About this RNA: Structure probing data (DMS and 2A3) for a 207-nucleotide construct. Source: RMDB library OK3TST, as collected in RNAgym. DMS adducts were read by reverse transcription with MarathonRT.
RNA sequence: GGGAACGACUCGAGUAGAGUCGAAAAAGUAGCUGCUGUAGAAGUUGAGAGAAGCAAUAGGUAAGUGUUGGCGAGGUUGACUGAGAAUUUACUCAGGAGAUGGGGUUAACAUGAGCCCUGAAGAAGAGGAUUUGAUUAUGUUUUUGUAAGACAGAGGAGUAUUCUACAGAUUCGUCUGUAGAAUACUAAAAGAAACAACAACAACAAC
Reactivity to DMS in 0.01 (KOAc 150mM, MgCl2 10mM, bicine 150mM(pH8.5), 24C), signal-to-noise 2, nucleotides 027 to 156: a090g020u000a070g030c010u010g000c020u020g030u000a080g000a070a160g020u010u010g020a080g020a100g020a060a090g010c040a050a100u010a080g030g000u010a090a140g020u000g020u000u000g040g020c070g010a140g020g040u000u000g000a190c020u000g000a060g010a120a130u000u000u010a040c020u000c010a050g010g010a140g010a060u000g010g020g020g000u000u020a030a060c060a090u010g000a170g030c020c000c030u000g030a050a010g000a050a070g010a050g020g000a090u000u000u010g000a120u000u010a070u000g000u010u010u000u010u010g020u000a040a100g020a070c050a040g010a120g010g010
Reactivity to 2A3 in 0.01 (KOAc 150mM, MgCl2 10mM, bicine 150mM(pH8.5), 24C), signal-to-noise 5, nucleotides 027 to 156: a000g070u060a030g000c030u020g000c010u020g030u080a020g020a140a020g030u070u090g040a040g000a000g020a110a000g000c050a050a100u070a110g020g040u060a050a090g030u030g030u070u070g040g010c040g010a030g060g010u050u060g020a010c000u010g000a010g010a030a050u160u150u120a100c010u020c010a010g050g020a070g010a040u080g000g060g040g000u040u080a060a010c000a050u100g040a010g040c010c000c050u060g030a030a020g020a020a020g010a030g040g000a040u060u060u120g040a050u030u200a090u120g020u010u020u010u060u040g030u020a060a050g030a050c060a020g090a050g090g020